Background: The record gives the reactivity of an RNA of 170 nucleotides to DMS and 2A3. The RNA was probed in 150 mM KOAc, 10 mM MgCl2 and 150 mM bicine (pH 8.5) at 24 C. It was measured as part of the RMDB library 15KLIB. The 2A3 profile rests on 6,885 reads. For DMS, 10,275 sequencing reads were counted.

[RMDB]
RNA sequence: GGGAACGACUCGAGUAGAGUCGAAAACGGGCCGUAGGGAAGAAAAGCACCCAGAGGGAGGAAGCCACACAGGGGUUUGCAGAGAAAUCACCUCCAGAGGACCCCUUCAGCGAACAGAACGAUCGCUAUCGCUCUGCGUUCGCGCAGAGCAAAAGAAACAACAACAACAAC
Reactivity to DMS in 0.01 (KOAc 150mM, MgCl2 10mM, bicine 150mM(pH8.5), 24C), signal-to-noise 6, nucleotides 027 to 129: c040g000g010g100c040c040g010u030a120g000g020g080a090a030g030a080a100a030a030g030c120a120c060c040c070a000g050a170g020g040g000a010g030g030a070a110g020c110c110a050c150a070c230a070g000g020g020g020u040u040u100g030c300a150g000a040g020a060a130a110u000c150a110c120c020u120c040c080a110g000a130g020g020a110c080c020c010c030u050u020c130a130g030c000g040a010a060c010a050g030a030a050c100g000a050u020c300g020c210u030a080u040c010
Reactivity to 2A3 in 0.01 (KOAc 150mM, MgCl2 10mM, bicine 150mM(pH8.5), 24C), signal-to-noise 3, nucleotides 027 to 129: c010g010g020g010c030c020g050u140a130g030g020g010a020a030g040a010a070a010a000g040c020a050c020c010c040a040g040a050g020g000g000a010g000g030a010a000g020c000c010a040c020a010c020a030g000g000g000g000u010u030u090g040c080a000g010a000g010a050a110a030u160c030a050c030c000u020c030c020a060g000a020g080g030a030c000c000c040c000u020u120c040a010g000c010g000a020a010c000a060g050a050a020c060g030a050u010c090g000c110u050a040u080c050